The record gives the reactivity of an RNA of 177 nucleotides to DMS and 2A3. The reactions ran in a buffer of 150 mM KOAc, 10 mM MgCl2 and 150 mM bicine (pH 8.5), at 24 C. Source: RMDB library OK1LIB, as collected in RNAgym. Values are in units of 0.01, from 0 to 300, in steps of 10.
RNA sequence: GGGAACGACUCGAGUAGAGUCGAAAAUGCAAUGGAACAGCAGCAACAGCAGCAGUCUAAGAAGACUGUACACUUGGGACGCGACCAUCUGGCCGCAUAUCUCCUUGCGUUUGUGCCAGAAACUGAAGCGUUCCAUUUUGUUCGCAAAAUGGAACGCAAAAGAAACAACAACAACAAC
Reactivity to DMS in 0.01 (KOAc 150mM, MgCl2 10mM, bicine 150mM(pH8.5), 24C), signal-to-noise 2, nucleotides 027 to 126: u030g010c040a070a040u070g010g000a140a030c070a050g020c060a070g050c080a000a140c230a150g030c150a160g020c040a000g030u000c010u000a250a140g010a010a040g000a010c010u000g000u000a040c140a090c260u000u060g040g000g000a030c050g000c000g010a110c080c270a050u000c030u010g000g010c010c000g010c010a010u000a070u040c160u050c140c070u010u070g000c040g020u010u000u010g030u000g000c010c010a000g030a070a110a040c100u000g020a130a160
Reactivity to 2A3 in 0.01 (KOAc 150mM, MgCl2 10mM, bicine 150mM(pH8.5), 24C), signal-to-noise 3, nucleotides 027 to 126: u110g030c100a000a100u110g050g030a080a140c030a040g020c030a000g010c010a040a090c020a050g070c040a000g000c000a020g000u060c020u130a180a120g100a080a010g030a140c000u000g020u100a040c070a070c020u020u030g010g020g000a000c040g030c020g060a040c050c000a080u100c020u010g020g000c050c020g010c030a000u030a090u160c160u150c020c040u090u010g010c010g090u110u150u170g200u070g000c010c000a000g000a050a120a030c080u110g020a070a020